Chemical mapping of a 177-nucleotide RNA with 2A3 and DMS. Source: RMDB library M2PK90, as collected in RNAgym. For DMS the reverse transcriptase was MarathonRT. Values cover nucleotides 27 to 126.
RNA sequence: GGGAACGACUCGAGUAGAGUCGAAAAUACACUUUACGUGUGCUGGUUUCAUUACUUUGUCCCAAACCAGGCACGCGUAAUUAAAGGCCAGUUUGGCCAGGUCCGGGUUAUCGAUGGUCACCAAUAACAGUAUGGUAUCGUUCGCGAUACCAUACUGAAAAGAAACAACAACAACAAC
Reactivity to 2A3 in 0.01 (KOAc 150mM, MgCl2 10mM, bicine 150mM(pH8.5), 24C), signal-to-noise 3, nucleotides 027 to 126: u090a010c040a020c040u020u020u030a000c020g000u010g000u000g000c000u000g010g000u000u040u080c040a080u070u180a150c120u260u140u230g110u150c000c010c010a010a020a000c020c000a060g150g020c000a000c000g000c000g010u000a000a010u020u080a160a050a010g010g010c010c020a060g120u090u220u180g030g000c010c020a000g000g030u010c030c030g040g000g030u040u060a070u070c030g020a040u100g000g040u040c010a000c090c010a040a050u150a090a030
Reactivity to DMS in 0.01 (KOAc 150mM, MgCl2 10mM, bicine 150mM(pH8.5), 24C), signal-to-noise 3, nucleotides 027 to 126: u010a150c110a130c130u000u000u010a000c010g030u000g010u010g020c000u000g000g010u000u000u000c150a110u000u010a100c150u010u000u010g030u000c040c020c020a050a020a040c000c000a020g020g020c000a010c000g010c000g000u000a000a010u000u000a050a120a080g010g010c010c020a140g000u000u000u010g010g000c020c020a040g010g000u000c030c020g000g010g020u000u000a050u010c060g000a080u000g020g020u000c070a100c090c050a080a090u020a060a190
For DMS, 2,976 sequencing reads were counted.